Structure probing data (2A3 and DMS) for a 207-nucleotide construct. For DMS the reverse transcriptase was MarathonRT. Source: RMDB library RSTRND, as collected in RNAgym. The RNA was probed in 150 mM KOAc, 10 mM MgCl2 and 150 mM bicine (pH 8.5) at 24 C. For DMS, 3,760 sequencing reads were counted. 2A3 adducts were read by reverse transcription with SuperScript II with manganese.
[RMDB]
RNA sequence: GGGAACGACUCGAGUAGAGUCGAAAACGUGGGUUACAAAGCAGUGCAGGGGCAUACCGAGGACCAGUCACCUCGUAAAACAACUGGAAAAAGUAUAGUCGCAAACGACGAAACUUACGCUCUAGCCGCUUAAUACCGGCUGGACGCUGCACCGAAGGCUGAAUAAAUUGUUCGCAAUUUAUUCAGCAAAAGAAACAACAACAACAAC
Reactivity to 2A3 in 0.01 (KOAc 150mM, MgCl2 10mM, bicine 150mM(pH8.5), 24C), signal-to-noise 4, nucleotides 027 to 156: c050g020u080g020g030g000u060u030a080c040a080a130a020g020c030a020g030u010g070c010a020g030g000g050g020c020a030u070a090c030c010g000a000g020g000a030c010c000a000g020u020c020a020c020c000u000c020g120u120a000a010a000a010c000a010a000c010u020g000g030a060a070a020a010a000g040u050a130u120a080g020u000c050g020c180a110a150a190c090g020a000c000g030a060a030a000c020u050u050a040c060g010c010u000c000u000a000g000c010c010g030c020u050u060a040a020u030a100c010c000g000g000c000u000g000g000a000c060g000c030u080g000c040a100c070c090g060a070a040g110
Reactivity to DMS in 0.01 (KOAc 150mM, MgCl2 10mM, bicine 150mM(pH8.5), 24C), signal-to-noise 2, nucleotides 027 to 156: c080g050u000g020g010g010u000u000a090c030a080a140a150g010c020a070g050u000g010c030a110g020g000g020g020c060a090u000a070c170c000g000a030g000g010a240c050c030a040g000u000c100a120c030c020u000c010g000u010a060a030a060a040c040a050a060c040u000g000g020a060a030a090a060a120g010u010a060u010a280g020u000c000g000c030a070a070a120c070g010a030c030g010a080a090a060c050u000u000a060c040g030c090u000c020u000a050g010c000c010g010c040u000u000a110a200u020a140c240c050g010g000c000u020g010g000a010c060g000c000u000g000c060a080c060c030g020a100a110g010